[RMDB]
RNA sequence: GGGAACGACUCGAGUAGAGUCGAAAAGCAACUCGUCACAGCGAAACCAGGAAUCAAAGCUUUUUAUCAGAAAGGUGGAGCUAAAGAAGCUGUAAUGAUCGAUUUAGAACCACACAACCCAUUAGAACAAAUAGGAUCCAUUCGUGGAUCCUAUUUGAAAAGAAACAACAACAACAAC
Reactivity to DMS in 0.01 (KOAc 150mM, MgCl2 10mM, bicine 150mM(pH8.5), 24C), signal-to-noise 7, nucleotides 027 to 126: g010c060a080a080c080u010c080g010u010c070a050c090a070g000c030g010a060a090a110c090c060a090g000g010a080a060u010c080a050a130a080g020c030u000u000u010u010u040a100u020c130a100g010a070a080a060g020g020u000g000g010a170g010c030u000a010a060a040g000a100a060g000c020u000g000u010a070a080u030g000a070u030c080g000a160u020u010u010a040g000a060a050c010c020a030c040a060c110a100a070c010c010c010a080u020u040a080g000a080a130
Reactivity to 2A3 in 0.01 (KOAc 150mM, MgCl2 10mM, bicine 150mM(pH8.5), 24C), signal-to-noise 9, nucleotides 027 to 126: g030c040a040a070c020u010c040g100u080c040a020c030a090g010c030g060a090a030a030c040c010a040g080g120a050a080u100c040a100a040a010g010c010u060u050u040u030u060a200u180c070a070g210a170a110a020g090g000u030g010g030a030g000c010u030a040a020a030g050a050a000g010c030u030g060u160a100a150u150g070a060u110c040g000a010u020u010u050a050g010a050a060c030c000a010c010a010c010a050a140c020c010c010a050u130u220a060g070a130a020
Conditions: 150 mM KOAc, 10 mM MgCl2 and 150 mM bicine (pH 8.5), 24 C.
Structure probing data (DMS and 2A3) for a 177-nucleotide construct.
The DMS profile rests on 14,180 reads.
The 2A3 profile rests on 9,499 reads.